[RMDB]
RNA sequence: GGGAACGACUCGAGUAGAGUCGAAAAUCUCGACAAGAGGCGGCGAUCCUCAGUGCUCUUACUCUUUUCUGUAAAGAGGAGACUGCUGGAUCCGCCGCCCAAGUUCGAGAUGGGCCAUCUCCGGGCGAGGAGUCGCGGGGGAAGCGAUCACCGCCCGCAACUUGGGUAACUUCGGUUACCCAAGUUGAAAAGAAACAACAACAACAAC
Reactivity to 2A3 in 0.01 (KOAc 150mM, MgCl2 10mM, bicine 150mM(pH8.5), 24C), signal-to-noise 5, nucleotides 027 to 156: u010c000u010c000g010a000c020a090a090g130a180g080g020c000g010g000c000g000a010u020c010c010u000c020a050g020u150g230c030u030c030u100u300a300c000u040c020u060u080u120u050c190u290g300u300a040a020a000g010a000g010g010a000g000a010c010u020g050c070u020g020g000a000u020c090c100g000c000c000g000c000c000c000a000a000g010u030u060c000g000a000g000a000u020g000g040g020c030c030a150u090c050u020c060c010g000g000g000c020g040a140g020g030a060g060u020c000g010c030g030g030g020g040g070a080a040g000c000g000a000u020c020a010c060c000g000c000c000c000g000